[RMDB]
RNA sequence: GGGAACGACUCGAGUAGAGUCGAAAAAGCUGCUGGCCAAGGCCGUGCAAUGCCACAACAAGGCCGAGCUGGACGAGUUGUUCGACGGCAUCGAACUGCCGGUCUACUGAUCGCCUCGGCCCAUGAAGGAUCAGCUAUACUUCGGUAUAGCUGAUCCAAAAGAAACAACAACAACAAC
Reactivity to 2A3 in 0.01 (KOAc 150mM, MgCl2 10mM, bicine 150mM(pH8.5), 24C), signal-to-noise 1, nucleotides 027 to 126: a000g040c040u180g030c020u030g000g020c030c030a130a130g060g000c070c030g080u080g020c010a000a120u120g040c070c010a080c020a130a080c060a110a060g000g000c010c000g000a030g040c100u090g000g050a040c030g010a010g060u110u070g050u080u080c000g000a010c000g010g060c020a060u070c130g070a060a060c080u020g010c000c000g030g000u000c010u030a080c080u070g070a080u090c040g030c010c000u040c000g020g000c000c020c020a080u140g020a120a090
Reactivity to DMS in 0.01 (KOAc 150mM, MgCl2 10mM, bicine 150mM(pH8.5), 24C), signal-to-noise 2, nucleotides 027 to 126: a070g030c050u000g020c010u010g040g020c020c060a130a110g000g000c040c050g000u010g030c020a140a140u000g000c060c010a060c140a060a060c210a100a160g000g000c000c000g000a060g000c040u000g000g020a150c030g000a040g010u040u000g000u000u000c060g000a060c010g010g000c010a260u000c120g010a100a180c160u000g000c010c000g000g000u000c040u000a100c180u000g000a090u000c020g010c190c000u010c030g000g000c040c030c050a120u010g040a130a120